An RNA of 177 nucleotides, treated with 2A3 and DMS and read out base by base. DMS adducts were read by reverse transcription with MarathonRT. The reactions ran in a buffer of 150 mM KOAc, 10 mM MgCl2 and 150 mM bicine (pH 8.5), at 24 C. The 2A3 profile rests on 46,384 reads. Values cover nucleotides 27 to 126. The DMS profile rests on 53,286 reads.
RNA sequence: GGGAACGACUCGAGUAGAGUCGAAAACGAAAGCGUGCCGAUUAACCGGUUGGUCAAAGUGGAAGGUACGCCGCUUGCCGAUGCCGAGGAUUUGGACUGGACGGAAUUUGUCCGCACCAUCGCCGUGGAUUUAUUUAGUGUUCGCACUAAAUAAAUCAAAAGAAACAACAACAACAAC
Reactivity to 2A3 in 0.01 (KOAc 150mM, MgCl2 10mM, bicine 150mM(pH8.5), 24C), signal-to-noise 9, nucleotides 027 to 126: c030g060a050a020a010g070c030g030u060g020c010c020g060a090u090u110a070a060c030c010g070g060u110u150g050g020u130c110a110a050a030g060u080g080g050a100a070g090g030u050a030c050g010c010c000g000c010u020u060g010c010c000g060a060u100g010c010c010g040a060g060g020a070u070u030u130g060g020a070c060u070g020g020a020c020g050g090a080a090u140u090u170g050u020c010c000g010c010a050c010c000a020u040c040g010c030c010g030u080g080
Reactivity to DMS in 0.01 (KOAc 150mM, MgCl2 10mM, bicine 150mM(pH8.5), 24C), signal-to-noise 9, nucleotides 027 to 126: c070g000a080a090a090g010c050g010u010g010c010c030g010a100u020u030a110a110c060c020g000g010u010u010g010g020u010c090a050a070a070g030u010g000g010a100a130g010g010u020a050c080g000c020c030g010c040u000u010g000c030c030g010a080u020g010c020c010g000a090g000g000a090u010u010u010g010g000a090c080u020g010g000a150c030g000g010a070a130u020u020u020g010u010c020c030g000c070a070c020c020a060u010c070g010c020c020g010u020g000